[RMDB]
RNA sequence: GGGAACGACUCGAGUAGAGUCGAAAACGAUCUGUUCGCAGAUCGAGCUACGGAGACGUAGCAAAGCGAGCGAGGGCACGGGCGCUCGCACUACCGGAAGUAAAGCCAUAUCCACGUGUGCUAGGAUAUGGCCGUGCCCAAAGAAACAGCACACGAAGAUUAUAAUGACGUUCGCGUCAUUAUAAUCAAAAGAAACAACAACAACAAC
Reactivity to 2A3 in 0.01 (KOAc 150mM, MgCl2 10mM, bicine 150mM(pH8.5), 24C), signal-to-noise 6, nucleotides 027 to 156: c010g000a000u010c000u010g030u100u090c230g010c110a000g000a000u000c010g010a040g000c000u000a000c000g030g030a060g020a070c000g010u010a000g000c020a010a090a010g000c000g000a000g000c010g010a070g010g020g000c010a000c030g070g070g010c010g040c000u010c010g020c010a000c010u080a060c010c050g060g120a110a040g110u230a100a060a020g020c000c000a000u000a000u000c010c010a030c120g000u000g000u000g000c010u010a020g010g000a000u000a000u010g000g000c000c000g000u000g000c000c000c010a080a160a010g120a030a120a040c060a020g000c000a000c000a000c010g020a050a020
Reactivity to DMS in 0.01 (KOAc 150mM, MgCl2 10mM, bicine 150mM(pH8.5), 24C), signal-to-noise 1, nucleotides 027 to 156: c000g000a020u000c000u000g020u000u000c300g070c050a040g010a040u000c000g010a030g030c010u000a030c020g020g000a300g010a270c000g040u000a010g000c040a040a030a180g020c000g020a040g000c000g030a120g040g010g010c030a040c020g020g020g000c050g010c000u000c040g100c020a000c040u000a300c040c000g000g010a130a090g020u010a050a080a030g030c000c000a010u000a020u000c000c000a060c040g000u020g010u000g000c000u010a150g010g000a090u000a030u000g010g040c020c000g060u000g000c060c020c030a100a110a150g000a150a070a140c110a050g020c010a000c010a030c050g000a180a230